[RMDB]
RNA sequence: GGGAACGACUCGAGUAGAGUCGAAAAGAAAGAAGGAGGUGGUCGAGGGAAUCUGAGAAGGCGCACAAGGUUUGUGUCCAAUACAGUCCACACCUUGCGCUACUCAGGUCUGCUCGUGCCCUCCCAAACGAAGAUGGACUUUCGAGUCCAUCUUCGUAAAAGAAACAACAACAACAAC
Reactivity to DMS in 0.01 (KOAc 150mM, MgCl2 10mM, bicine 150mM(pH8.5), 24C), signal-to-noise 1, nucleotides 027 to 126: g020a000a030a210g000a300a150g000g000a000g000g000u000g030g020u040c000g000a030g040g000g010a000a000u000c000u040g000a010g030a140a140g000g000c010g070c010a130c300a030a080g000g000u000u010u000g000u000g030u000c100c120a130a130u000a140c180a220g000u000c130c000a000c070a000c000c020u000u000g000c040g000c000u000a150c000u000c000a000g000g000u000c000u020g100c050u030c000g000u000g000c000c000c000u000c000c000c050a050a220
Reactivity to 2A3 in 0.01 (KOAc 150mM, MgCl2 10mM, bicine 150mM(pH8.5), 24C), signal-to-noise 3, nucleotides 027 to 126: g120a020a080a010g150a050a090g010g020a000g030g020u200g060g080u060c000g000a010g010g020g020a010a140u000c000u060g000a000g070a160a220g090g000c010g020c000a040c090a090a020g010g020u020u070u050g180u030g000u060c010c030a060a020u300a180c090a010g030u000c010c010a020c000a000c020c010u010u010g000c000g000c000u020a050c020u000c000a000g000g000u020c000u120g230c000u020c000g040u090g060c000c000c000u020c000c000c000a100a120
Structure probing data (DMS and 2A3) for a 177-nucleotide construct. 2A3 adducts were read by reverse transcription with SuperScript II with manganese. Conditions: 150 mM KOAc, 10 mM MgCl2 and 150 mM bicine (pH 8.5), 24 C. For 2A3, 1,890 sequencing reads were counted. For DMS, 1,421 sequencing reads were counted.